[RMDB]
RNA sequence: GGGAACGACUCGAGUAGAGUCGAAAAUACAGCGUUUUGAGUACUGGACUAUGUUUUGUACCAGCGUUAAUACAUCAUCGUCAGAGUCAUUUCUUAUAGGCGUACAUUACCUUGGUGAUUACGCAACAACACCUGUCAUUGAUGGCAAUACUAUGCACCCGUACCACCUUUUCGAAGGUGGUACGGGAAAAGAAACAACAACAACAAC
Reactivity to 2A3 in 0.01 (KOAc 150mM, MgCl2 10mM, bicine 150mM(pH8.5), 24C), signal-to-noise 1, nucleotides 027 to 156: u170a020c100a000g010c000g000u020u070u170u210g000a000g020u050a050c060u050g060g000a050c010u150a200u300g050u030u000u020u010g050u050a010c000c000a000g010c000g000u000u080a100a030u060a180c000a000u020c000a000u020c160g000u060c050a000g000a060g180u010c010a110u000u300u110c140u100u150a170u220a260g070g000c000g000u050a000c000a180u060u060a010c020c020u040u240g120g000u000g000a010u000u060a000c000g030c000a000a270c000a000a000c000a050c030c000u010g080u000c000a020u000u200g000a030u020g000g000c020a020a020u010a300c060u060a020u080g020c000a080